[RMDB]
RNA sequence: GGGAACGACUCGAGUAGAGUCGAAAAAGGUAGCCGCCAUUGAGGGAGAGUUUAAGCUGAGGACAGAGCAAAGGAAGACCUUCGUGGAACUCAUGAAGAGAGGAGACCUUCCCGUCUGGCUAGCCUACAUUUCCUCGCGAUUCGUCGCGAGGAAAUGAAAAGAAACAACAACAACAAC
Reactivity to 2A3 in 0.01 (KOAc 150mM, MgCl2 10mM, bicine 150mM(pH8.5), 24C), signal-to-noise 1, nucleotides 027 to 126: a000g000g000u010a000g020c030c030g010c020c000a030u050u140g000a000g020g070g010a090g000a050g050u030u150u210a130a000g010c040u050g040a070g140g190a060c090a120g130a030g000c040a020a030a140g080g020a030a030g120a060c000c000u000u030c020g020u020g000g000a080a030c010u010c020a030u190g090a060a100g170a000g000a020g050g060a050g000a000c020c000u000u000c000c010c000g000u020c030u000g000g000c000u030a040g140c000c020u040a010
Reactivity to DMS in 0.01 (KOAc 150mM, MgCl2 10mM, bicine 150mM(pH8.5), 24C), signal-to-noise 1, nucleotides 027 to 126: a020g000g000u010a040g060c000c070g000c000c000a060u000u010g020a050g010g030g010a070g000a300g030u000u000u000a080a130g010c030u020g010a200g000g000a080c130a060g000a100g050c070a020a100a120g010g000a040a130g010a100c030c010u000u000c050g040u010g000g000a040a190c030u020c020a030u010g010a060a040g000a110g000a060g000g000a070g000a020c040c070u000u000c010c020c020g030u000c010u000g010g000c050u000a050g020c010c010u000a150
Chemical mapping of a 177-nucleotide RNA with 2A3 and DMS.
For DMS the reverse transcriptase was MarathonRT.
High DMS reactivity at an A or C suggests that its Watson-Crick edge is free.
The RNA was probed in 150 mM KOAc, 10 mM MgCl2 and 150 mM bicine (pH 8.5) at 24 C.